[RMDB]
RNA sequence: GGGAACGACUCGAGUAGAGUCGAAAACAAAAAGCACGAGGAGGCUGUCAUUAGAUUUGGAACCAUCACGUCCCGCUUCAAAGACUGUGCUGCUUUGUCAACCAUGGCCCACUUAGUCAAGGUGACAACCGUGAUGUACCUUCGGGUACAUCACGGUAAAAGAAACAACAACAACAAC
Reactivity to 2A3 in 0.01 (KOAc 150mM, MgCl2 10mM, bicine 150mM(pH8.5), 24C), signal-to-noise 3, nucleotides 027 to 126: c050a000a090a110a000a010g040c050a020c080g020a040g120g000a020g030g000c040u030g060u040c020a090u050u160a100g150a230u070u040u090g060g000a000a010c010c010a090u080c050a010c060g080u010c000c000c000g020c030u080u080c080a050a080a060g090a060c150u130g030u070g000c010u010g030c030u050u010u060g060u030c020a070a130c090c000a060u030g030g000c000c000c000a150c110u070u150a030g000u020c030a000a070g050g010u020g010a000c010a010
Reactivity to DMS in 0.01 (KOAc 150mM, MgCl2 10mM, bicine 150mM(pH8.5), 24C), signal-to-noise 2, nucleotides 027 to 126: c080a060a070a070a090a010g000c050a020c080g000a050g020g000a020g010g000c030u000g010u020c050a030u010u010a060g010a150u000u010u010g000g000a020a110c120c080a010u030c080a030c120g000u000c030c010c030g000c040u020u050c050a120a110a100g000a150c070u020g030u000g000c050u000g000c050u000u030u000g000u020c100a110a120c020c040a140u000g000g020c000c100c120a070c150u000u000a040g000u000c000a100a080g060g000u000g010a020c090a080

Source information:
Structure probing data (2A3 and DMS) for a 177-nucleotide construct. The DMS profile rests on 2,868 reads. Reactivities are rounded to 0.1 and cut off at 0 and 3. DMS adducts were read by reverse transcription with MarathonRT.